Description: An RNA of 170 nucleotides, treated with 2A3 and DMS and read out base by base. Conditions: 150 mM KOAc, 10 mM MgCl2 and 150 mM bicine (pH 8.5), 24 C. For 2A3 the reverse transcriptase was SuperScript II with manganese. For DMS, 15,182 sequencing reads were counted. Source: RMDB library 15KLIB, as collected in RNAgym.
RNA sequence: GGGAACGACUCGAGUAGAGUCGAAAAGAGGGAGCCAAUGCCAAAGAGGUGGGGAUCGUCGGAAGGUAUCGUCCCAAUGACCAAGAGAAGGGAAGAAACGGAAGCCUUUCCCCUUGACGCCGGUGAAAAACGCUACGGUUCGCCGUAGCGAAAAGAAACAACAACAACAAC
Reactivity to 2A3 in 0.01 (KOAc 150mM, MgCl2 10mM, bicine 150mM(pH8.5), 24C), signal-to-noise 4, nucleotides 027 to 129: g070a020g000g010g000a010g010c010c010a080a070u130g060c010c020a100a100a010g040a030g020g040u130g030g000g010g010a020u030c020g040u040c000g050g020a040a010g030g020u070a040u100c060g050u060c010c000c000a010a090u130g020a040c010c040a030a000g020a010g010a020a050g030g010g010a020a000g010a020a040a000c040g040g000a030a010g020c020c000u000u040u010c000c010c000c000u030u100g020a020c010g040c010c010g000g000u060g010a090a030a010a010a000
Reactivity to DMS in 0.01 (KOAc 150mM, MgCl2 10mM, bicine 150mM(pH8.5), 24C), signal-to-noise 6, nucleotides 027 to 129: g030a050g040g010g010a050g040c040c070a070a110u000g040c110c120a080a110a120g020a080g000g040u030g010g030g010g040a010u010c060g070u030c090g010g030a070a000g040g050u040a060u020c180g020u050c030c070c060a000a000u000g040a070c070c110a070a000g020a040g000a030a070g010g010g030a050a000g020a020a070a060c130g000g000a090a120g010c040c030u010u000u000c000c010c030c110u000u000g000a080c000g000c050c070g050g020u020g020a050a110a050a070a090
Description: DMS adducts were read by reverse transcription with MarathonRT.